[RMDB]
RNA sequence: GGGAACGACUCGAGUAGAGUCGAAAAGGUUGCAUUCUUCCAUCUGAGUGCACUAUGUUUAGGGAUGCAGAGGGCCGUAUGACACCAUACUGCCAUGAUCCUACUGUUUUGCCUGGGGCUUUUGCGUGUACAGAACUCAGUUCGCUGAGUUCUGUACAAAAGAAACAACAACAACAAC
Reactivity to DMS in 0.01 (KOAc 150mM, MgCl2 10mM, bicine 150mM(pH8.5), 24C), signal-to-noise 1, nucleotides 027 to 126: g010g000u010u000g000c030a050u000u000c010u000u040c140c200a090u030c130u010g000a060g010u000g000c040a080c030u000a050u010g040u000u000u000a180g000g000g000a070u000g030c060a060g010a150g010g010g020c010c080g010u000a000u000g010a090c290a230c300c020a040u000a030c050u000g000c000c000a090u010g000a120u010c040c020u010a110c090u000g000u010u000u000u000g020c020c010u000g000g000g000g010c140u000u000u000u000g010c080g000u010